[RMDB]
RNA sequence: GGGAACGACUCGAGUAGAGUCGAAAAGAUAUGGACGAUACUCCUCGAUAAGACGUAGUCGGAAACGACUAUACGUCUUUUGACGAGGGUAUCGUCCUAAGUCAAAACAGAUCGUUCGCGAUCUGAACCGUCCCUUACUGUUCGCAGUAAGGGACGGAAAAGAAACAACAACAACAAC
Reactivity to DMS in 0.01 (KOAc 150mM, MgCl2 10mM, bicine 150mM(pH8.5), 24C), signal-to-noise 1, nucleotides 027 to 126: g030a000u000a150u040g000g000a000c020g020a020u000a000c000u030c000c040u010c030g000a180u050a020a000g000a000c000g020u000a010g000u000c000g020g020a030a040a020c010g030a000c000u000a050u030a040c070g040u000c000u010u000u000u010g010a140c200g120a000g000g000g000u000a000u000c010g010u000c000c000u000a000a060g000u000c030a150a050a120a250c010a030g000a020u000c000g030u000u020c280g030c000g000a020u000c000u000g000a080a180
Reactivity to 2A3 in 0.01 (KOAc 150mM, MgCl2 10mM, bicine 150mM(pH8.5), 24C), signal-to-noise 2, nucleotides 027 to 126: g010a000u020a000u100g000g000a000c000g020a000u010a000c180u300c160c000u020c050g180a240u090a300a020g000a010c000g000u010a000g010u000c000g000g000a030a020a020c000g000a010c010u060a100u040a110c020g010u000c070u000u020u010u130g300a190c090g000a000g000g000g000u010a000u000c000g000u000c000c000u010a000a000g000u000c000a000a000a010a100c010a000g000a020u010c020g020u130u110c300g000c050g220a000u030c020u010g000a040a040

This 177-nucleotide RNA was probed chemically with DMS and 2A3.
High DMS reactivity at an A or C suggests that its Watson-Crick edge is free.